This 177-nucleotide RNA was probed chemically with 2A3 and DMS.
The reactions ran in a buffer of 150 mM KOAc, 10 mM MgCl2 and 150 mM bicine (pH 8.5), at 24 C.
Values are in units of 0.01, from 0 to 300, in steps of 10.
RNA sequence: GGGAACGACUCGAGUAGAGUCGAAAAUCUACCUGCGAACCAUAUUGUAGAAGAAACUCUCGUGCCACAUCUUCCAAAUACGCCUGCGGUAUACUUGCCGGUGUAGCCACAUCACACAUGGUAAGAAGGAUCAUUAUGAUUUCGAUCAUAAUGAUCCAAAAGAAACAACAACAACAAC
Reactivity to 2A3 in 0.01 (KOAc 150mM, MgCl2 10mM, bicine 150mM(pH8.5), 24C), signal-to-noise 9, nucleotides 027 to 126: u030c010u030a100c010c010u030g020c040g040a050a050c030c030a060u070a070u150u190g060u120a050g030a150a010g050a060a110a030c030u040c000u010c050g070u080g040c020c010a050c010a070u020c020u060u020c010c010a030a060a120u090a040c040g020c010c010u020g020c020g030g020u070a050u050a160c030u030u080g010c000c010g010g000u020g010u010a030g030c040c030a080c010a060u100c010a020c010a010c000a060u090g020g010u050a030a040g070a070a060
Reactivity to DMS in 0.01 (KOAc 150mM, MgCl2 10mM, bicine 150mM(pH8.5), 24C), signal-to-noise 4, nucleotides 027 to 126: u030c030u000a100c020c030u000g010c040g010a050a050c080c050a070u030a070u010u010g030u000a060g010a140a090g000a100a080a060c040u000c030u010c040g020u020g010c030c010a050c080a040u010c040u000u010c040c060a060a050a110u030a060c080g050c030c040u000g000c060g000g020u050a030u030a130c020u010u000g000c010c010g030g010u000g020u000a060g020c030c090a020c110a020u000c090a060c040a040c060a060u020g010g010u010a040a090g000a130a200